RNA sequence: GGGAACGACUCGAGUAGAGUCGAAAAGAGAUGGACAUUUCCUGUUCCGCCUGUGAGUGAGUGAGUGAAAGAUGUCCAUCUUAGGUGAACAAAACACACACACACACACAGAAACAACAACAACAAGGGGUAAUACAAACUUCGGUUUGUAUUACCCAAAAGAAACAACAACAACAAC
Reactivity to 2A3 in 0.01 (KOAc 150mM, MgCl2 10mM, bicine 150mM(pH8.5), 24C), signal-to-noise 5, nucleotides 027 to 126: g020a000g000a000u000g000g000a000c000a000u010u020u060c000c010u010g140u070u010c010c010g040c000c050u300g080u100g100a180g080u020g000a080g020u080g020a020g000u260g050a050a030a050g120a020u030g000u000c010c000a000u000c000u000u020a010g020g010u060g070a070a000c040a060a070a070a000c030a000c000a000c010a000c000a000c000a000c000a000c020a010c000a000g010a000a010a000c010a000a000c000a000a000c000a000a000c010a020a010g000
Reactivity to DMS in 0.01 (KOAc 150mM, MgCl2 10mM, bicine 150mM(pH8.5), 24C), signal-to-noise 1, nucleotides 027 to 126: g000a020g020a000u000g000g000a010c000a000u010u000u040c020c010u000g010u020u020c040c020g000c050c010u040g000u020g040a130g000u010g000a070g000u040g000a070g060u070g030a060a030a050g030a050u000g000u000c000c000a000u000c000u000u030a060g000g020u020g000a150a100c190a080a060a150a130c080a050c020a080c040a050c010a030c000a010c050a040c000a000c300a040g000a000a000a000c010a000a040c040a000a030c010a000a020c060a000a000g300